[RMDB]
RNA sequence: GGGAACGACUCGAGUAGAGUCGAAAAGAAGAGAAGCGCGCGAAUUGGAAACCAGCGAACCUUAUUACGCGCGCAAGGAACCGGGCCUUGGUUCCUUGGAAAGACUAGAUAAUAUCGCUGGUAAAGACCAGUAAUGAUGAUUCGUCAUCAUUACUGGAAAAGAAACAACAACAACAAC
Reactivity to DMS in 0.01 (KOAc 150mM, MgCl2 10mM, bicine 150mM(pH8.5), 24C), signal-to-noise 5, nucleotides 027 to 126: g010a140a130g020a150g000a110a100g020c000g020c020g000c010g010a080a070u010u010g000g010a180a110a060c010c000a000g000c000g000a010a140c050c020u020u010a040u010u010a080c020g010c000g030c000g000c010a000a010g000g010a010a010c000c000g040g010g020c130c100u040u050g010g010u000u000c000c000u000u010g000g010a090a100a090g000a110c120u030a060g000a100u020a050a090u030a100u000c000g010c010u000g000g000u020a050a070a110g000a190
Reactivity to 2A3 in 0.01 (KOAc 150mM, MgCl2 10mM, bicine 150mM(pH8.5), 24C), signal-to-noise 9, nucleotides 027 to 126: g080a060a020g110a000g020a140a030g040c010g000c000g000c010g020a030a040u040u050g030g030a060a090a120c000c000a000g000c000g010a060a130c000c010u090u080a070u060u110a100c010g000c000g000c000g000c000a000a000g000g000a000a000c000c010g070g220g070c040c060u110u090g010g000u000u000c000c000u000u010g020g030a050a050a010g070a020c090u140a040g050a150u120a170a050u090a080u070c010g000c000u000g000g000u020a030a030a000g050a040

Chemical mapping of a 177-nucleotide RNA with DMS and 2A3. The DMS profile rests on 13,104 reads. Source: RMDB library OK1LIB, as collected in RNAgym. Conditions: 150 mM KOAc, 10 mM MgCl2 and 150 mM bicine (pH 8.5), 24 C.